[RMDB]
RNA sequence: GGGAACGACUCGAGUAGAGUCGAAAAGCUUAAAAUGUGCAAUAUAACUAUUGUUAUCUAACGAUGUUUCAAACAGCAUAAAUACAUGAAAUGAUCGCGUUGCCUUUCAAAAUAAACUGAUGAUAUCGGAGUUGUAUUGUUUCGACAAUACAACUCCAAAAGAAACAACAACAACAAC
Reactivity to 2A3 in 0.01 (KOAc 150mM, MgCl2 10mM, bicine 150mM(pH8.5), 24C), signal-to-noise 2, nucleotides 027 to 126: g030c050u080u080a100a050a050a040u230g090u110g000c020a000a000u000a010u010a140a060c040u050a130u300u130g000u010u010a070u100c140u040a010a030c000g020a010u000g000u000u040u030c050a120a080a080c010a130g180c040a040u070a110a100a000u180a020c070a040u050g050a000a070a000u110g050a040u030c010g000c010g080u030u040g030c000c000u110u110u060c090a090a110a000a020u200a060a050a060c040u030g040a010u070g030a050u140a060u280c060
Reactivity to DMS in 0.01 (KOAc 150mM, MgCl2 10mM, bicine 150mM(pH8.5), 24C), signal-to-noise 2, nucleotides 027 to 126: g040c110u010u000a070a040a130a070u000g000u010g000c000a010a010u000a020u000a010a100c040u000a140u010u000g010u010u000a080u000c070u040a070a100c050g000a010u010g000u000u000u010c050a030a080a190c130a040g000c090a080u010a040a030a060u000a060c210a130u010g000a010a030a060u000g000a070u000c020g020c090g000u000u000g010c020c020u010u000u000c100a060a020a070a080u000a040a110a100c110u000g020a150u000g010a110u000a130u010c150